[RMDB]
RNA sequence: GGGAACGACUCGAGUAGAGUCGAAAAGAGUAAUGGGCGCACAAGGUGAGAUGAAGCUGUAGUCUCACUGGAAGGACUAGAGGUUAGAGGAGACACGCCCAAAACAAGUAACAGCUUCAUCAAGAGAAUAUCAUCGAGUCUUCGGACUCGAUGAUAUAAAAGAAACAACAACAACAAC
Reactivity to 2A3 in 0.01 (KOAc 150mM, MgCl2 10mM, bicine 150mM(pH8.5), 24C), signal-to-noise 1, nucleotides 027 to 126: g140a000g010u090a090a130u140g010g000g000c060g000c000a050c010a110a160g000g030u120g050a080g000a000u000g020a000a000g020c000u000g010u020a010g000u010c000u000c000a020c060u040g010g050a070a010g140g060a010c060u050a100g080a140g300g050u220u080a000g010a010g090g050a020g010a000c060a000c030g000c000c000c010a000a080a000a010c070a010a040g070u130a020a000c000a010g000c000u040u010c030a010u000c010a040a000g060a000g020a070
Reactivity to DMS in 0.01 (KOAc 150mM, MgCl2 10mM, bicine 150mM(pH8.5), 24C), signal-to-noise 2, nucleotides 027 to 126: g000a220g000u010a050a170u000g020g040g010c040g070c160a040c130a090a130g010g010u010g050a070g000a000u000g000a010a090g000c000u020g010u000a150g000u020c000u000c030a050c000u000g000g000a150a100g060g060a060c030u000a050g000a130g000g020u000u000a030g010a220g070g060a110g030a030c050a220c140g060c000c020c000a030a000a050a060c110a030a060g010u010a080a050c020a010g020c000u000u000c000a000u000c080a070a110g000a130g000a240